Chemical mapping of a 177-nucleotide RNA with 2A3 and DMS. It was measured as part of the RMDB library RFMREP. DMS adducts were read by reverse transcription with MarathonRT. Reactivities are given for positions 27 through 126. The 2A3 profile rests on 4,280 reads.
RNA sequence: GGGAACGACUCGAGUAGAGUCGAAAAAUCUCACUCGGUGUUCUCACCGAAAGCACGUAAUCGCUGGUGUAACUCAUGUUGGCUGGGGGGCCUCCUGGCGCGCUGCGAACUGGGGUGCGCCCCUUACGAAUUAUGUAAACUUCGGUUUACAUAAUUCAAAAGAAACAACAACAACAAC
Reactivity to 2A3 in 0.01 (KOAc 150mM, MgCl2 10mM, bicine 150mM(pH8.5), 24C), signal-to-noise 2, nucleotides 027 to 126: a010u030c010u000c000a010c020u020c010g000g010u020g010u090u040c060u040c030a020c010c020g130a100a030a010g050c010a010c060g110u130a050a070u110c070g020c060u050g000g070u060g020u050a080a040c030u020c100a080u070g010u060u050g100g010c060u050g020g000g020g000g040g000c010c000u030c000c020u010g010g010c020g000c030g040c050u180g020c020g010a090a080c020u050g010g030g000g020u040g020c050g120c000c000c000c030u010u030a030c030
Reactivity to DMS in 0.01 (KOAc 150mM, MgCl2 10mM, bicine 150mM(pH8.5), 24C), signal-to-noise 3, nucleotides 027 to 126: a060u000c000u010c020a100c060u000c020g000g010u000g000u000u000c090u000c020a110c080c060g000a050a070a060g010c050a050c090g010u010a090a070u000c130g010c050u000g000g010u000g010u000a080a060c090u020c070a070u010g010u000u000g010g000c090u000g000g000g000g000g000g010c010c010u000c020c020u000g010g010c060g010c050g010c150u010g010c020g000a100a080c040u010g000g000g000g000u000g020c060g000c010c010c030c010u000u000a040c150